The record gives the reactivity of an RNA of 177 nucleotides to 2A3 and DMS. For 2A3, 7,461 sequencing reads were counted. For DMS, 8,835 sequencing reads were counted. The data come from the RNA Mapping Database (RMDB), library OK1LIB. Conditions: 150 mM KOAc, 10 mM MgCl2 and 150 mM bicine (pH 8.5), 24 C.

[RMDB]
RNA sequence: GGGAACGACUCGAGUAGAGUCGAAAACGAGAAGCCCAAAUUUAAAACUCCCCAUCGUCCGGCGACCUGAUUACCAGAUUACCAAAUCCGCAGCUGUGCGUGGCUAGUUUCGAGUGCCGGUGUUCCAGCCUAAAUAGGGAUUCGUCCCUAUUUAGGCAAAAGAAACAACAACAACAAC
Reactivity to 2A3 in 0.01 (KOAc 150mM, MgCl2 10mM, bicine 150mM(pH8.5), 24C), signal-to-noise 6, nucleotides 027 to 126: c060g030a020g040a100a020g020c000c000c010a040a080a030u190u190u100a100a100a020a020c030u060c000c000c010c000a030u050c010g060u010c010c020g010g010c020g020a060c000c010u060g020a080u020u040a050c020c020a030g040a120u040u100a060c010c030a050a080a070u060c010c010g010c050a030g020c030u050g010u040g140c020g020u020g020g000c010u020a030g050u010u050u080c040g020a020g030u050g050c020c010g010g010u020g000u030u000c010c010a010
Reactivity to DMS in 0.01 (KOAc 150mM, MgCl2 10mM, bicine 150mM(pH8.5), 24C), signal-to-noise 4, nucleotides 027 to 126: c070g020a180g000a140a130g010c000c020c050a040a050a090u020u030u020a070a060a110a130c080u010c020c000c010c010a070u040c050g020u000c030c040g010g000c050g010a060c060c010u010g000a080u020u010a100c070c060a060g000a050u020u000a160c130c090a030a080a050u030c050c020g000c030a060g000c060u020g030u010g020c040g030u000g000g000c070u000a050g000u000u010u010c030g010a060g020u020g000c040c010g000g020u020g010u000u010c020c040a150